[RMDB]
RNA sequence: GGGAACGACUCGAGUAGAGUCGAAAAGAUAUGGAGCUCACUACCCACCCUCUCGCUGCUCGGAAACGAGCAGAACUACGAGUUGGAGGUGAGCUCCUAAGUCAUGGCCGUAGGUUCGCCUACGGAAGACGAAUUAUCAGUUCGCUGAUAAUUCGUCAAAAGAAACAACAACAACAAC
Reactivity to 2A3 in 0.01 (KOAc 150mM, MgCl2 10mM, bicine 150mM(pH8.5), 24C), signal-to-noise 4, nucleotides 027 to 126: g070a010u170a130u300g000g000a000g000c000u010c000a020c030u240a260c010c020c010a070c030c020c000u020c000u020c010g010c010u010g000c000u000c020g010g000a060a080a050c010g010a000g020c000a000g000a010a020c070u220a040c030g010a000g030u120u060g080g010a010g020g000u000g000a000g010c000u000c000c000u000a000a010g020u040c070a100u240g260g000c000c000g000u000a010g030g050u050u070c300g070c060c000u020a010c010g010g010a010a020
Reactivity to DMS in 0.01 (KOAc 150mM, MgCl2 10mM, bicine 150mM(pH8.5), 24C), signal-to-noise 4, nucleotides 027 to 126: g020a120u000a180u000g000g010a010g010c000u000c010a000c000u000a200c040c010c070a300c120c030c030u000c020u010c030g010c000u000g010c000u000c000g010g000a090a060a180c030g010a010g010c010a010g000a020a030c110u010a300c040g000a020g010u010u000g010g020a200g030g000u000g000a010g010c010u010c000c000u000a010a070g010u010c090a130u000g010g010c000c000g000u000a000g010g000u000u010c240g010c020c000u000a010c000g000g000a070a060